An RNA of 207 nucleotides, treated with 2A3 and DMS and read out base by base.
The DMS profile rests on 5,599 reads.
Values cover nucleotides 27 to 156.
[RMDB]
RNA sequence: GGGAACGACUCGAGUAGAGUCGAAAAAGCAGGUCGCAGUGACUCGGAAGCUCGGACUGUCUAGUAACAACAUAGGUGACCGCAAAUCCGCAAGGACUCGUACGGUCACUGAAUCCUGCCCAGUGCAGGUAUCUGAACACCUCGUACAAGAGGACGAGUAACGAAUAACGUUCGCGUUAUUCGUUACAAAAGAAACAACAACAACAAC
Reactivity to 2A3 in 0.01 (KOAc 150mM, MgCl2 10mM, bicine 150mM(pH8.5), 24C), signal-to-noise 5, nucleotides 027 to 156: a000g040c030a030g030g050u100c050g000c070a020g020u010g120a070c070u020c120g090g030a020a000g010c030u020c030g020g030a030c010u020g010u090c050u050a050g060u090a110a080c110a060a010c020a100u110a070g010g010u000g010a000c000c000g010c030a050a070a010u010c000c010g030c070a020a080g000g000a020c000u040c140g100u160a060c000g010g000u000c010a000c000u000g000a000a010u050c000c000u010g020c000c040c040a120g000u120g100c000a000g030g010u020a060u030c060u050g020a050a010c040a060c050c010u020c000g050u160a140c030a150a060g010a010g020g050a040c040g070a070
Reactivity to DMS in 0.01 (KOAc 150mM, MgCl2 10mM, bicine 150mM(pH8.5), 24C), signal-to-noise 3, nucleotides 027 to 156: a060g030c030a040g030g020u000c030g020c040a130g030u000g020a080c030u020c080g020g020a190a300g010c010u000c030g050g020a040c030u000g010u000c030u000a180g020u010a130a080c090a050a080c100a130u010a230g000g010u000g010a030c000c010g020c030a060a100a050u000c000c000g000c300a110a190g020g010a000c000u000c060g010u000a050c000g010g000u010c020a010c000u000g010a080a090u000c010c010u000g050c010c020c150a150g000u000g040c000a030g020g020u000a020u000c020u010g010a090a100c070a110c010c000u000c020g000u000a190c120a060a090g010a030g000g000a080c110g000a200